[RMDB]
RNA sequence: GGGAACGACUCGAGUAGAGUCGAAAAGCAGUUCCGAGGGGGUCACUGCGAACACUUGACUACCGGUCGGGCCAGUCUUGUGGAUUGGACGUUCUACUACCGGUCGGGCCAGUAGUUCGUCCGAAAAGGCUAGCAGCAGCUUCGGCUGUUGCUAGCCAAAAGAAACAACAACAACAAC
Reactivity to DMS in 0.01 (KOAc 150mM, MgCl2 10mM, bicine 150mM(pH8.5), 24C), signal-to-noise 1, nucleotides 027 to 126: g000c020a000g010u000u040c050c030g000a190g010g000g000g010g000u060c210a090c060u000g000c000g040a090a080c130a090c000u000u000g000a040c010u000a120c020c000g010g010u030c130g000g010g070c020c020a100g020u000c010u000u080g000u070g000g020a090u030u030g000g010a020c070g020u000u000c000u000a000c030u000a170c000c020g010g020u110c120g000g000g020c080c060a010g020u020a000g000u000u000c000g010u010c000c030g000a000a060a090a060
Reactivity to 2A3 in 0.01 (KOAc 150mM, MgCl2 10mM, bicine 150mM(pH8.5), 24C), signal-to-noise 3, nucleotides 027 to 126: g020c010a000g000u030u010c030c000g020a220g050g150g020g010g030u110c050a000c040u020g010c030g030a050a000c030a020c000u030u040g020a010c000u050a060c010c020g070g090u080c050g020g000g040c040c020a000g030u030c030u070u080g070u110g040g040a070u040u130g000g000a000c000g020u000u010c000u000a000c000u040a050c010c010g230g180u170c110g150g030g010c020c040a000g000u010a000g000u000u000c000g000u000c000c000g030a020a040a000a000